[RMDB]
RNA sequence: GGGAACGACUCGAGUAGAGUCGAAAAGCGCUGCAAUCAGGAUGGUCCUUUCAAUCCCUAAAGUCCAGGAAUUAAGAGGCCCCUGGGAUGGACUUGCUCAAGGUCACCAGCUUGGGCCGGACAGAACGGCCCAAUAUCUCUUCGGAGAUAUUGGGCCAAAAGAAACAACAACAACAAC
Reactivity to DMS in 0.01 (KOAc 150mM, MgCl2 10mM, bicine 150mM(pH8.5), 24C), signal-to-noise 1, nucleotides 027 to 126: g000c140g020c030u010g020c080a080a060u000c020a020g000g010a080u000g020g010u010c040c010u020u000u010c090a080a070u000c030c030c010u010a080a140a070g010u000c120c040a060g000g020a060a130u000u000a100a160g000a240g000g040c010c070c030c070u010g000g000g000a120u030g000g010a060c000u010u000g020c060u030c230a070a050g000g000u010c070a020c030c050a080g010c180u010u010g010g000g040c000c010g030g000a030c040a030g010a030a160c160